This 177-nucleotide RNA was probed chemically with DMS. The reactions ran in a buffer of 150 mM KOAc, 10 mM MgCl2 and 150 mM bicine (pH 8.5), at 24 C. It was measured as part of the RMDB library OK2TRN. For DMS the reverse transcriptase was MarathonRT. The DMS profile rests on 1,255 reads.
[RMDB]
RNA sequence: GGGAACGACUCGAGUAGAGUCGAAAAGGCCGGGUAAAAAAGUGGGCGUGGUCGGCAUCGGCGGUCUGGGACAUAUGGGGAUUAAGCUGGCCCACGCGAUGGGGGCACAUGUGGUGGCAUUUACCACGCCCUAUAGAGCAUUCGUGCUCUAUAGGGCAAAAGAAACAACAACAACAAC
Reactivity to DMS in 0.01 (KOAc 150mM, MgCl2 10mM, bicine 150mM(pH8.5), 24C), signal-to-noise 1, nucleotides 027 to 126: g040g000c060c020g020g000g020u020a020a080a030a060a040a110g010u000g010g040g020c020g050u010g020g020u000c050g020g010c040a090u000c080g020g060c110g000g000u000c090u000g000g010g020a090c110a070u000a080u000g010g010g010g010a190u020u000a030a130g000c090u000g000g000c040c020c000a060c030g040c090g000a130u000g000g010g010g000g000c060a090c120a040u000g030u010g000g010u010g010g000c100a100u010u000u000a070c040c030a040c090